This 177-nucleotide RNA was probed chemically with 2A3 and DMS. High 2A3 reactivity points to a flexible backbone, as in loops and unpaired stretches. Values cover nucleotides 27 to 126. In probing experiments dimethyl sulfate is read out at A N1 and C N3, which are open when not base-paired. Values are in units of 0.01, from 0 to 300, in steps of 10. It was measured as part of the RMDB library OK2TST.
[RMDB]
RNA sequence: GGGAACGACUCGAGUAGAGUCGAAAAUAGUUCAACAGUUAUUGAUACUUAUCCGGGGCUUGCGAACGUGGAAAAAUGGGUAGUUACAAGGCCAAAGACUAUGCCUGAGCCCAAGUCUUAGGCUCAGAGUGCUAUACUACUUCGGUAGUAUAGCACUAAAAGAAACAACAACAACAAC
Reactivity to 2A3 in 0.01 (KOAc 150mM, MgCl2 10mM, bicine 150mM(pH8.5), 24C), signal-to-noise 2, nucleotides 027 to 126: u060a000g020u040u040c020a070a070c030a080g070u120u080a120u160u110g030a030u060a210c020u090u030a030u070c000c010g060g000g020g010c070u050u080g030c040g090a120a030c060g050u090g020g100a030a030a000a070a130u170g040g030g000u040a050g020u040u010a040c060a120a040g050g000c000c000a030a000a000g010a010c040u080a050u070g050c040c010u030g000a000g000c010c020c000a000a020g010u020c070u030u090a040g010g000c010u010c000a040g020
Reactivity to DMS in 0.01 (KOAc 150mM, MgCl2 10mM, bicine 150mM(pH8.5), 24C), signal-to-noise 3, nucleotides 027 to 126: u010a060g010u010u010c060a040a080c190a140g000u010u000a180u010u000g010a130u010a030c050u000u000a080u000c050c030g020g010g020g000c120u000u000g030c080g010a040a070c130g020u000g020g000a010a070a070a110a070u010g000g010g030u010a040g000u000u000a090c140a060a070g000g000c010c030a030a090a080g000a030c050u000a020u010g000c060c010u010g000a060g000c010c010c090a060a090g010u000c080u000u010a100g000g000c000u000c060a040g010

Source information: Conditions: 150 mM KOAc, 10 mM MgCl2 and 150 mM bicine (pH 8.5), 24 C.